[RMDB]
RNA sequence: GGGAACGACUCGAGUAGAGUCGAAAACACCACAACGGGUGGAGCCUGCGGUUUAAUUGGAUUCAACGCCGGGAAGCUUACCGGGAUCGACAGUUGUAUGAAGGCCAGGCUGAAGACCUUGCCGGACCCUGGAAUGAUACUUCGGUAUCAUUCCAGGAAAAGAAACAACAACAACAAC
Reactivity to DMS in 0.01 (KOAc 150mM, MgCl2 10mM, bicine 150mM(pH8.5), 24C), signal-to-noise 2, nucleotides 027 to 126: c110a260c020c040a100c230a120a170c090g000g000g010u030g010g000a100g010c000c010u000g020c020g010g030u000u020u070a060a130u000u030g020g000a110u020u000c100a040a100c200g010c040c000g000g000g010a050a220g060c080u000u000a230c020c030g000g000g010a050u020c050g000a110c110a050g000u000u010g000u020a090u000g030a300a120g000g000c000c120a050g000g030c040u010g000a090a100g000a200c070c000u000u000g000c000c000g010g000a050c100
Reactivity to 2A3 in 0.01 (KOAc 150mM, MgCl2 10mM, bicine 150mM(pH8.5), 24C), signal-to-noise 2, nucleotides 027 to 126: c030a000c060c020a030c030a020a020c020g070g050g000u100g000g040a000g050c000c090u020g100c010g110g010u050u020u040a150a090u230u080g140g070a110u070u050c010a020a010c050g050c010c010g000g000g020a120a000g000c000u050u010a060c000c000g000g000g040a110u070c050g020a030c040a110g000u000u030g160u130a270u140g140a090a050g000g000c000c000a010g050g000c020u080g060a030a000g030a010c020c010u040u000g120c000c000g000g020a020c000
The record gives the reactivity of an RNA of 177 nucleotides to DMS and 2A3. The 2A3 profile rests on 847 reads. For 2A3 the reverse transcriptase was SuperScript II with manganese. DMS adducts were read by reverse transcription with MarathonRT.